[RMDB]
RNA sequence: GGGAACGACUCGAGUAGAGUCGAAAAUAACUUUGGGUCAAGGACGACCCGUUUAACAAUGGAGGUAUUAUGAUUGAGUUCGACUUCAAGAAUGAGGUCCUCAAAGCCUCGCCUAUCGUCGGGACCGGCCUGUAGCCUGAUUCGUCAGGCUACAGGCAAAAGAAACAACAACAACAAC
Reactivity to DMS in 0.01 (KOAc 150mM, MgCl2 10mM, bicine 150mM(pH8.5), 24C), signal-to-noise 1, nucleotides 027 to 126: u000a000a090c110u000u000u070g030g000g000u010c000a100a170g030g040a130c160g000a050c110c000c010g000u050u000u000a080a160c160a000a010u120g000g000a130g000g010u000a040u070u020a130u030g000a100u000u000g000a030g000u110u030c160g010a010c020u030u000c000a010a160g000a110a210u040g000a020g040g000u000c000c030u000c010a050a050a090g000c000c000u000c000g000c020c000u000a070u000c130g000u000c000g010g000g040a180c030c010g000
Reactivity to 2A3 in 0.01 (KOAc 150mM, MgCl2 10mM, bicine 150mM(pH8.5), 24C), signal-to-noise 3, nucleotides 027 to 126: u150a050a090c140u120u120u110g030g000g000u060c100a080a170g300g050a050c080g020a060c000c000c000g010u040u060u060a210a090c090a000a060u100g140g000a020g000g020u070a080u270u130a040u130g200a160u110u000g020a020g060u060u300c100g000a000c000u000u000c030a010a040g160a210a120u280g020a000g010g000u000c000c030u030c000a070a030a020g030c020c000u010c030g000c030c000u110a120u120c020g050u000c010g050g000g000a010c000c100g000